[RMDB]
RNA sequence: GGGAACGACUCGAGUAGAGUCGAAAAUAACUGGCCCGCCAACUAACAUGGAUUGGAGGAAGGGAGUGGUGGUCAAGAAACAAAGAAGAUGACAGAAUAAAGUCCUCCUGGUAGACCUGAUAGUGGUUCUGUUUAAUUUUACAUUUUAACACGGAUAGAGGGUAAUUUAUUUCGAUAAAUUACCCUCAAAAGAAACAACAACAACAAC
Reactivity to DMS in 0.01 (KOAc 150mM, MgCl2 10mM, bicine 150mM(pH8.5), 24C), signal-to-noise 1, nucleotides 027 to 156: u010a030a110c010u020g000g040c060c020c020g000c050c000a040a160c130u000a090a180c040a100u000g020g030a180u000u000g030g010a120g010g000a130a080g040g010g000a140g070u000g030g020u000g010g000u000c050a070a140g000a130a160a150c040a080a110a130g030a080a040g010a090u020g020a140c020a040g000a050a090u010a120a090a170g040u010c000c000u010c040c040u000g010g000u000a130g000a050c020c080u010g020a060u000a110g030u000g030g040u020u020c030u000g020u000u000u010a020a090u000u020u020u000a090c080a050u000u010u010u000a000a100c040a110c070g000g010a120u020a220